The record gives the reactivity of an RNA of 177 nucleotides to 2A3 and DMS.
High DMS reactivity at an A or C suggests that its Watson-Crick edge is free.
2A3 adducts were read by reverse transcription with SuperScript II with manganese.
For DMS, 2,090 sequencing reads were counted.
RNA sequence: GGGAACGACUCGAGUAGAGUCGAAAAUAGCUGGUUCUCCUCGAAAUAGCUUUAGGGCUAGCGUCGUGUAAUUGAGUAAUGGAGGUAGAGCACUGAAUGGGCUAGGGGCUAUAGUAGUUACCGAACAUCCCCUUUUAGCAUUCGUGCUAAAAGGGGAAAAAGAAACAACAACAACAAC
Reactivity to 2A3 in 0.01 (KOAc 150mM, MgCl2 10mM, bicine 150mM(pH8.5), 24C), signal-to-noise 1, nucleotides 027 to 126: u050a000g020c070u020g080g010u070u060c030u030c020c020u030c020g090a090a030a090u020a000g020c000u020u080u080a230g030g020g020c020u040a000g050c030g050u050c060g000u050g050u090a080a050u050u090g050a000g100u080a110a100u190g040g020a020g000g020u100a030g000a010g050c020a000c040u070g000a080a050u110g050g030g000c050u020a010g000g030g000g030c010u080a040u070a120g040u020a000g010u010u040a120c010c040g020a020a050c010a030
Reactivity to DMS in 0.01 (KOAc 150mM, MgCl2 10mM, bicine 150mM(pH8.5), 24C), signal-to-noise 2, nucleotides 027 to 126: u000a090g010c060u000g010g010u010u000c010u000c030c000u000c030g010a020a160a150u000a020g010c030u000u000u010a120g040g000g010c010u000a030g030c100g010u000c020g060u000g030u020a060a050u000u010g030a140g000u010a080a070u010g010g020a070g000g010u010a030g000a080g020c030a080c030u010g010a080a080u000g000g000g000c080u000a080g000g000g010g000c090u000a040u000a060g010u020a080g000u000u020a120c060c020g010a030a080c210a160